Chemical mapping of a 207-nucleotide RNA with DMS and 2A3. The 2A3 profile rests on 1,208 reads. The RNA was probed in 150 mM KOAc, 10 mM MgCl2 and 150 mM bicine (pH 8.5) at 24 C.

RNA sequence: GGGAACGACUCGAGUAGAGUCGAAAAUGACUACUUUGACCAGUGGUAUGCGGAGAACAUCGGCGGCAGCGACGAAAUCAGCCCCGGUCAGGGCCUUGUCGCGUUCUCGUCGUUGUUCGCGGUGAUGGUCCUCGUCGAGGACGCGGAGAUGCUCGACAUACGCAUAUAGCUUCGGCUAUAUGCGUAUAAAAGAAACAACAACAACAAC
Reactivity to DMS in 0.01 (KOAc 150mM, MgCl2 10mM, bicine 150mM(pH8.5), 24C), signal-to-noise 1, nucleotides 027 to 156: u000g020a130c020u010a040c110u010u000u020g010a070c060c030a180g030u020g010g010u000a060u000g000c050g020g010a200g000a040a080c030a000u010c010g000g040c040g030g040c060a050g010c040g000a030c000g010a020a050a080u010c140a160g110c020c000c020c040g030g010u000c060a170g000g020g000c030c170u000u000g010u000c010g010c000g030u000u000c020u000c000g040u000c030g010u010u010g010u000u000c030g030c010g030g010u000g000a090u010g000g010u000c010c070u000c040g000u000c070g000a010g020g010a090c020g020c060g000g000a110g000a100u010g030c010u000c040g010a200c190
Reactivity to 2A3 in 0.01 (KOAc 150mM, MgCl2 10mM, bicine 150mM(pH8.5), 24C), signal-to-noise 2, nucleotides 027 to 156: u140g020a030c020u030a020c010u060u040u170g020a000c010c030a000g020u040g010g030u040a060u100g080c060g000g100a060g030a030a020c000a020u020c030g050g000c010g060g010c020a040g000c000g030a000c020g030a090a000a090u170c030a050g000c000c020c000c020g000g080u080c090a050g000g000g030c010c050u090u120g030u060c020g020c040g150u110u000c100u040c030g000u010c000g000u010u010g000u010u130c030g000c010g060g060u090g020a130u100g030g010u040c000c000u030c020g110u010c040g020a020g030g030a010c030g010c000g090g030a090g010a030u100g070c030u030c040g000a020c020